[RMDB]
RNA sequence: GGGAACGACUCGAGUAGAGUCGAAAAGGGACUAACACGCAUUGCUCAUCACCAUCGAUGACGAUGGUUUCCAAAACCAAUUCACCGCCAGGCUUUAACAACGCUUUCAAUUCCAACAGAUGAUCGAGCCACAAUCAUAGUUCGCUAUGAUUGUGGCAAAAGAAACAACAACAACAAC
Reactivity to DMS in 0.01 (KOAc 150mM, MgCl2 10mM, bicine 150mM(pH8.5), 24C), signal-to-noise 1, nucleotides 027 to 126: g030g030g000a110c050u010a060a060c090a040c110g030c010a020u010u000g000c070u000c060a110u000c050a070c040c050a060u000c060g030a130u010g000a090c080g000a050u010g000g000u000u000u000c070c060a050a070a090a140c060c090a020a060u010u040c070a010c040c080g010c040c010a050g040g010c030u000u010u020a070a030c080a070a040c040g000c000u010u000u000c110a010a150u010u000c050c000a080a110c020a160g000a070u000g000a100u000c190g010a200
Reactivity to 2A3 in 0.01 (KOAc 150mM, MgCl2 10mM, bicine 150mM(pH8.5), 24C), signal-to-noise 1, nucleotides 027 to 126: g050g030g020a020c010u050a090a000c020a000c040g050c010a030u000u110g000c030u050c060a040u090c020a000c090c020a110u090c100g150a140u110g070a040c000g000a010u020g000g000u030u030u040c070c000a040a050a040a040c000c030a030a050u080u020c050a020c100c000g000c040c010a020g020g080c000u150u080u000a100a090c070a010a070c030g030c080u040u110u050c020a030a090u090u000c020c000a070a010c040a100g100a180u100g000a070u130c110g070a010

Structure probing data (DMS and 2A3) for a 177-nucleotide construct. 2A3 is a SHAPE reagent: it acylates the 2'-hydroxyl of flexible nucleotides of all four kinds. The RNA was probed in 150 mM KOAc, 10 mM MgCl2 and 150 mM bicine (pH 8.5) at 24 C. For 2A3 the reverse transcriptase was SuperScript II with manganese. The 2A3 profile rests on 1,013 reads. Source: RMDB library OK2TST, as collected in RNAgym.